[RMDB]
RNA sequence: GGGAACGACUCGAGUAGAGUCGAAAAGACGGCCUGACCGCUGCGACGCGCGAACCCGUCGCGCCGGCGGUCGGUCGCCGGCGGUGCCGCGCUGCCCGGCAACGACAUGCCGAGCGCCUCGGCGGCGGGGCUAUUAUAGUUUCGACUAUAAUAGCCCAAAAGAAACAACAACAACAAC
Reactivity to 2A3 in 0.01 (KOAc 150mM, MgCl2 10mM, bicine 150mM(pH8.5), 24C), signal-to-noise 6, nucleotides 027 to 126: g080a030c010g010g020c000c070u120g010a020c000c020g010c020u040g050c110g140a210c050g050c000g010c010g050a100a160c030c090c110g140u090c010g000c000g000c010c000g000g000c000g000g000u010c000g000g010u020c000g000c000c000g010g000c050g070g130u100g020c030c010g030c010g010c030u050g010c000c050c000g010g000c010a030a040c070g190a040c050a070u110g000c000c000g020a030g010c040g020c010c020u060c050g070g000c010g000g010c040g000
Reactivity to DMS in 0.01 (KOAc 150mM, MgCl2 10mM, bicine 150mM(pH8.5), 24C), signal-to-noise 3, nucleotides 027 to 126: g010a120c000g000g000c000c000u000g030a020c010c000g020c000u010g000c200g010a100c050g000c020g010c050g020a060a140c130c130c100g010u000c020g010c000g000c040c010g010g030c000g010g000u000c010g010g020u000c050g060c000c010g030g010c070g000g000u010g010c030c000g010c300g010c050u000g030c030c030c000g000g000c000a030a110c180g000a150c220a080u020g010c000c000g000a030g000c020g010c200c030u000c080g010g010c030g000g000c010g010